Source: RMDB library TTRINS, as collected in RNAgym. This 177-nucleotide RNA was probed chemically with DMS.

[RMDB]
RNA sequence: GGGAACGACUCGAGUAGAGUCGAAAAGAUAUGGACACAGUGAGGGCUGUCAUCGGCAAGCAAAGAUGUCGGAAACGACAUCUACUUGUGAUGACCCGAUGAGCAGCCCUCACUGUGUCCUAAGUCAUCGAUACAGAUACUUCGGUAUCUGUAUCGAAAAAGAAACAACAACAACAAC
Reactivity to DMS in 0.01 (KOAc 150mM, MgCl2 10mM, bicine 150mM(pH8.5), 24C), signal-to-noise 1, nucleotides 027 to 126: g040a020u000a300u000g010g030a000c000a010c000a010g030u000g000a030g020g000g040c020u000g020u000c000a000u000c010g010g000c020a090a090g010c030a010a050a010g000a010u000g000u010c000g000g000a060a090a300c020g020a010c000a000u000c010u010a030c280u000u000g000u000g040a110u000g010a110c300c010c010g010a010u000g000a180g010c000a000g020c000c000c000u000c000a010c000u000g010u000g000u000c000c000u000a000a000g000u000c050a220
DMS adducts were read by reverse transcription with MarathonRT.